[RMDB]
RNA sequence: GGGAACGACUCGAGUAGAGUCGAAAACGGAUCAUCGCGGCCGACGGAGACGUCAGCGACGAGGAUUUGAUCGCCCGCGAGGACGUCGUUGUCACUAUCACCGAAACGGGAUACGCCAAGCGCACCACUGUAGGGGAUAGUUCGCUAUCCCCUACAGAAAAGAAACAACAACAACAAC
Reactivity to 2A3 in 0.01 (KOAc 150mM, MgCl2 10mM, bicine 150mM(pH8.5), 24C), signal-to-noise 5, nucleotides 027 to 126: c040g020g040a040u050c060a010u020c070g000c050g070g000c050c020g020a020c000g050g050a050g020a010c010g030u030c030a020g070c030g170a100c020g010a130g090g000a050u060u060u200g160a200u100c090g020c020c020c000g000c010g010a060g000g030a010c000g020u010c030g060u090u170g030u050c020a020c050u090a130u100c040a100c120c020g060a130a140a080c090g010g010g040a030u030a050c020g000c020c010a050a030g010c020g020c030a020c020c030a050
Reactivity to DMS in 0.01 (KOAc 150mM, MgCl2 10mM, bicine 150mM(pH8.5), 24C), signal-to-noise 4, nucleotides 027 to 126: c090g010g000a070u030c030a060u010c040g020c060g000g010c100c090g030a040c000g010g010a230g000a060c000g000u000c010a070g000c040g020a090c040g000a130g000g010a080u010u030u020g020a130u020c100g000c070c000c000g000c000g010a080g000g010a020c020g010u020c000g000u030u010g020u000c030a120c180u010a030u000c040a090c000c020g000a040a120a100c130g000g000g000a030u000a030c150g000c010c030a060a050g010c020g010c050a100c050c070a210
About this RNA: This 177-nucleotide RNA was probed chemically with 2A3 and DMS. The reactions ran in a buffer of 150 mM KOAc, 10 mM MgCl2 and 150 mM bicine (pH 8.5), at 24 C. Values cover nucleotides 27 to 126. The 2A3 profile rests on 2,827 reads. 2A3 adducts were read by reverse transcription with SuperScript II with manganese.